[RMDB]
This 177-nucleotide RNA was probed chemically with DMS and 2A3. For DMS the reverse transcriptase was MarathonRT. The reactions ran in a buffer of 150 mM KOAc, 10 mM MgCl2 and 150 mM bicine (pH 8.5), at 24 C. 2A3 adducts were read by reverse transcription with SuperScript II with manganese. The 2A3 profile rests on 10,266 reads.
RNA sequence: GGGAACGACUCGAGUAGAGUCGAAAAGGUAGGGCAUUCGUGCCCUACCACACCUCUAAGCUGAUUGGCGAGGACGACGUCGCGGCCCACGUUUACCAACAACUACUCUCUCCUUCGGGAGAGAGAAAGUGUCUAUACGUUUCGACGUAUAGACACUAAAAGAAACAACAACAACAAC
Reactivity to DMS in 0.01 (KOAc 150mM, MgCl2 10mM, bicine 150mM(pH8.5), 24C), signal-to-noise 4, nucleotides 027 to 126: g010g020u000a010g000g020g030c000a020u000u020c210g010u010g010c000c000c000u000a000c000c000a030c160a090c030c000u000c090u000a100a180g020c040u010g000a090u000u010g010g010c020g010a140g000g000a070c060g010a040c100g030u000c030g000c060g020g000c030c010c020a280c070g000u010u000u000a140c050c020a070a060c080a060a070c090u000a210c000u000c000u000c000u000c000c010u000u020c160g010g020g010a000g010a000g000a000g000a010a030
Reactivity to 2A3 in 0.01 (KOAc 150mM, MgCl2 10mM, bicine 150mM(pH8.5), 24C), signal-to-noise 6, nucleotides 027 to 126: g000g000u000a000g000g000g020c010a020u020u090c180g110u040g000c000c000c000u010a000c000c000a000c000a000c000c000u020c040u060a070a040g020c020u030g110a300u180u260g110g000c020g010a050g030g060a060c040g000a010c040g030u040c020g010c030g070g050c000c000c000a060c030g000u010u060u070a200c030c020a040a060c020a030a010c030u100a060c000u030c000u010c000u010c010c000u020u040c150g070g000g000a000g000a000g000a000g000a000a020